The record gives the reactivity of an RNA of 177 nucleotides to DMS and 2A3.
Source: RMDB library RFM100, as collected in RNAgym.
The reactions ran in a buffer of 150 mM KOAc, 10 mM MgCl2 and 150 mM bicine (pH 8.5), at 24 C.
For DMS the reverse transcriptase was MarathonRT.
For 2A3, 484 sequencing reads were counted.
RNA sequence: GGGAACGACUCGAGUAGAGUCGAAAAAUCAGGGUUCGAUUCCGGAGAGGGAGCCUGAGAAACGGCUACCACAUCUAAGGAAGCCAGCAGGCUCGGGGAGAUAGUGACGAAAAAUAACAAUACAGGACCUAGGUAGUCACUUCGGUGACUACCUAGGAAAAGAAACAACAACAACAAC
Reactivity to DMS in 0.01 (KOAc 150mM, MgCl2 10mM, bicine 150mM(pH8.5), 24C), signal-to-noise 1, nucleotides 027 to 126: a020u030c010a090g040g000g000u050u030c100g000a110u000u050c040c030g000g000a150g040a220g000g030g000a000g000c000c000u000g000a060g000a050a000a060c210g000g060c030u020a060c000c000a010c210a070u000c130u000a130a000g000g030a210a040g000c000c000a020g090c050a000g010g000c000u000c240g040g010g000g000a060g000a030u060a130g020u000g030a070c090g000a000a100a100a090a100u000a050a180c090a000a130u000a090c100a080g000g000a250
Reactivity to 2A3 in 0.01 (KOAc 150mM, MgCl2 10mM, bicine 150mM(pH8.5), 24C), signal-to-noise 1, nucleotides 027 to 126: a000u120c020a000g020g000g000u030u000c040g030a200u150u160c070c000g030g080a190g090a000g030g040g010a000g000c020c020u000g000a020g270a110a100a000c000g030g010c000u080a120c010c010a040c110a080u180c130u300a050a050g010g000a010a040g000c000c000a000g000c000a010g000g000c040u010c060g050g000g000g000a020g000a040u220a110g190u050g100a060c020g050a030a070a000a090a000u250a020a020c060a130a000u170a150c010a040g070g000a060